[RMDB]
RNA sequence: GGGAACGACUCGAGUAGAGUCGAAAAGCGCUGAGCCCUUCUACCCUAGCUUGCCUGUGUCCUAGGGAAUCGGAAGGUCAUCCUUCACAGGAUCGUGUGGAAGUCCUGCUCGGGGCGGAAGCAUUAAAACCAAUCGAGCUAGUCAAUUCGUGGCGUGGAAUCCCUAAUUGUUCGCAAUUAGGGAUUCAAAAGAAACAACAACAACAAC
Reactivity to DMS in 0.01 (KOAc 150mM, MgCl2 10mM, bicine 150mM(pH8.5), 24C), signal-to-noise 1, nucleotides 027 to 156: g020c030g000c090u000g010a190g010c020c000c000u020u000c030u000a120c000c000c000u000a050g020c060u010u020g060c100c070u000g050u000g070u010c070c040u000a050g010g000g000a050a050u000c100g030g010a090a090g010g030u000c070a040u000c020c010u000u000c050a120c050a080g000g000a050u000c060g080u000g030u010g020g000a300a070g010u000c010c000u000g010c130u000c130g050g010g000g000c000g000g000a300a100g000c030a060u000u000a060a070a190a150c070c030a120a180u010c000g010a090g030c040u000a150g000u000c060a050a150u000u010c030g010u000g000g000c030g050u030g000
Reactivity to 2A3 in 0.01 (KOAc 150mM, MgCl2 10mM, bicine 150mM(pH8.5), 24C), signal-to-noise 3, nucleotides 027 to 156: g020c040g010c110u120g040a040g010c000c000c010u020u000c020u040a080c000c000c000u000a000g010c020u020u090g010c010c020u050g020u020g020u050c030c010u020a000g000g010g070a030a070u190c150g000g010a010a000g000g010u050c030a100u060c010c000u100u110c040a040c010a030g010g010a030u050c030g000u010g000u030g050g000a050a030g010u010c000c010u030g040c070u050c080g000g000g000g010c000g040g020a010a010g000c000a000u060u060a030a020a050a080c070c080a020a070u100c030g010a000g000c000u040a010g070u090c060a080a080u170u080c110g080u080g020g000c040g020u050g090